[RMDB]
RNA sequence: GGGAACGACUCGAGUAGAGUCGAAAAUUCAUUCAUUGUCUCAUUCAAAUCGGCAGAAGCUGGAGGGUAGUAAAUACGGAGACCAAACACCGCUGCCUUUCCAAAAAUAAUGGAAUACGUAUGCAUCACGUAUGUCCUAAUUCGUUAGGACAUACGUAAAAGAAACAACAACAACAAC
Reactivity to 2A3 in 0.01 (KOAc 150mM, MgCl2 10mM, bicine 150mM(pH8.5), 24C), signal-to-noise 9, nucleotides 027 to 126: u070u040c030a030u060u020c020a050u090u090g040u020c020u020c020a110u220u070c050a060a060a130u130c040g030g000c030a040g030a140a040g050c080u060g030g010a030g000g060g000u040a020g010u030a020a120a100u120a070c030g030g010a040g040a050c040c030a030a130a020c050a030c040c030g000c000u000g000c000c000u010u090u010c030c020a030a070a030a000a020u250a040a090u070g050g020a060a040u080a100c060g030u080a060u180g040c030a060u070c020
Reactivity to DMS in 0.01 (KOAc 150mM, MgCl2 10mM, bicine 150mM(pH8.5), 24C), signal-to-noise 5, nucleotides 027 to 126: u020u010c050a090u010u010c080a050u000u020g000u010c020u000c030a090u020u040c120a050a110a090u040c110g000g000c040a080g000a080a110g030c090u000g000g000a060g000g020g000u010a020g010u010a060a060a090u020a110c090g010g020a090g010a110c100c050a070a050a100c140a070c040c040g020c000u000g000c030c050u020u020u000c000c010a000a060a050a060a080u040a080a050u020g010g010a050a060u030a050c080g000u010a030u020g010c080a050u020c110
An RNA of 177 nucleotides, treated with 2A3 and DMS and read out base by base. For 2A3 the reverse transcriptase was SuperScript II with manganese. The RNA was probed in 150 mM KOAc, 10 mM MgCl2 and 150 mM bicine (pH 8.5) at 24 C. The DMS profile rests on 11,632 reads. Source: RMDB library OK1LIB, as collected in RNAgym.